[RMDB]
Notes: Chemical mapping of a 177-nucleotide RNA with DMS and 2A3. High DMS reactivity at an A or C suggests that its Watson-Crick edge is free. DMS adducts were read by reverse transcription with MarathonRT. The reactions ran in a buffer of 150 mM KOAc, 10 mM MgCl2 and 150 mM bicine (pH 8.5), at 24 C. Reactivities are given for positions 27 through 126.
RNA sequence: GGGAACGACUCGAGUAGAGUCGAAAACAUUUCGCGCAAGGUGUUGGUACUUUGCUGAUCGAAGUGAAAACACCACCGCAGCAAGCUUCCAUGCACAUCAAACAACUGACAUCGCAACUCCAUGCUAGUAGUAAUGCACUUUCGAGUGCAUUACUACAAAAGAAACAACAACAACAAC
Reactivity to DMS in 0.01 (KOAc 150mM, MgCl2 10mM, bicine 150mM(pH8.5), 24C), signal-to-noise 4, nucleotides 027 to 126: c050a070u010u000u000c050g040c050g000c050a090a060g000g020u010g010u010u000g010g000u010a030c010u000u000u000g020c060u010g030a080u020c020g010a070a010g010u000g000a090a140a090a080c110a060c040c000a080c150c090g010c010a060g010c090a070a070g010c050u010u010c040c020a070u000g020c060a040c050a070u010c050a030a050a070c060a070a070c060u010g010a040c070a060u020c070g010c060a040a080c080u010c040c050a060u010g000c080u020a180
Reactivity to 2A3 in 0.01 (KOAc 150mM, MgCl2 10mM, bicine 150mM(pH8.5), 24C), signal-to-noise 3, nucleotides 027 to 126: c010a020u060u090u080c050g000c000g010c050a070a040g050g000u030g020u100u190g060g020u120a020c010u020u020u030g000c070u080g070a150u170c040g020a030a020g010u020g040a080a010a030a030c000a000c000c020a010c030c070g030c010a030g010c040a030a010g030c030u080u000c010c000a010u060g020c020a030c000a050u140c050a080a090a120c020a010a030c060u070g040a030c010a040u060c040g020c070a040a060c020u000c020c000a050u080g030c040u010a040